An RNA of 177 nucleotides, treated with DMS and 2A3 and read out base by base.
It was measured as part of the RMDB library TTRDES.
2A3 adducts were read by reverse transcription with SuperScript II with manganese.
For 2A3, 10,284 sequencing reads were counted.
High DMS reactivity at an A or C suggests that its Watson-Crick edge is free.
The reactions ran in a buffer of 150 mM KOAc, 10 mM MgCl2 and 150 mM bicine (pH 8.5), at 24 C.
RNA sequence: GGGAACGACUCGAGUAGAGUCGAAAAGAUAUGGAACGUGUAGAGCAACAGCCCAGACGUCGGAAACGACGUUUGGGACAUGCUCUGACACGUUCCUAAGUCAAAGGUGUGUGUUCGCACACACCAAUCCUAAGAGACACUUCGGUGUCUCUUAGGAAAAAGAAACAACAACAACAAC
Reactivity to DMS in 0.01 (KOAc 150mM, MgCl2 10mM, bicine 150mM(pH8.5), 24C), signal-to-noise 4, nucleotides 027 to 126: g010a030u010a300u000g000g000a000a010c000g030u000g010u000a030g000a010g040c000a060a090c300a200g000c000c000c000a000g000a000c010g020u010c000g010g000a100a060a170c000g010a020c000g010u000u000u000g000g010g000a000c080a110u000g000c000u010c000u020g010a010c010a000c000g010u000u000c000c000u000a010a070g020u000c020a090a160a130g010g030u000g000u010g020u000g000u000u010c240g020c010a010c000a010c000a000c010c000a040a040
Reactivity to 2A3 in 0.01 (KOAc 150mM, MgCl2 10mM, bicine 150mM(pH8.5), 24C), signal-to-noise 3, nucleotides 027 to 126: g010a010u060a030u100g010g010a010a010c000g010u000g000u020a000g010a000g050c090a050a140c090a250g010c000c000c000a000g000a000c000g000u000c000g010g030a020a050a060c000g020a010c000g010u010u000u000g010g000g000a020c000a010u100g000c010u020c000u000g010a010c000a000c000g000u000u000c000c000u000a000a000g000u000c050a090a120a180g000g000u020g000u000g000u010g010u010u120c300g040c160a000c000a000c000a010c000c000a000a020